RNA sequence: GGGAACGACUCGAGUAGAGUCGAAAAACCACAACGGUUGAGUCAUUAGUCAAUAGGUUUAACAAAGAGUGGGUAUCAUCCUUAGGAACAAGUAGAAUGAUAGUAAGAUAUGCUCUAGAAAGGAAGACAUAAGGCCUCUCUUCGGAGAGGCCUUAUGAAAAGAAACAACAACAACAAC
Reactivity to DMS in 0.01 (KOAc 150mM, MgCl2 10mM, bicine 150mM(pH8.5), 24C), signal-to-noise 1, nucleotides 027 to 126: a060c000c000a090c120a000a050c180g010g020u020u000g000a120g000u020c050a090u000u000a110g000u000c050a050a070u030a030g030g010u020u000u020a080a050c150a040a090a000g000a100g000u020g000g020g030u000a050u000c060a010u000c000c020u000u000a080g000g030a110a080c150a060a110g100u000a050g000a090a090u000g000a020u000a010g060u000a060a140g000a150u010a080u000g040c090u010c010u010a050g040a070a100a080g030g020a010a010g010a160
An RNA of 177 nucleotides, treated with DMS and read out base by base.
For DMS the reverse transcriptase was MarathonRT.
The data come from the RNA Mapping Database (RMDB), library OK2TRN.
The DMS profile rests on 552 reads.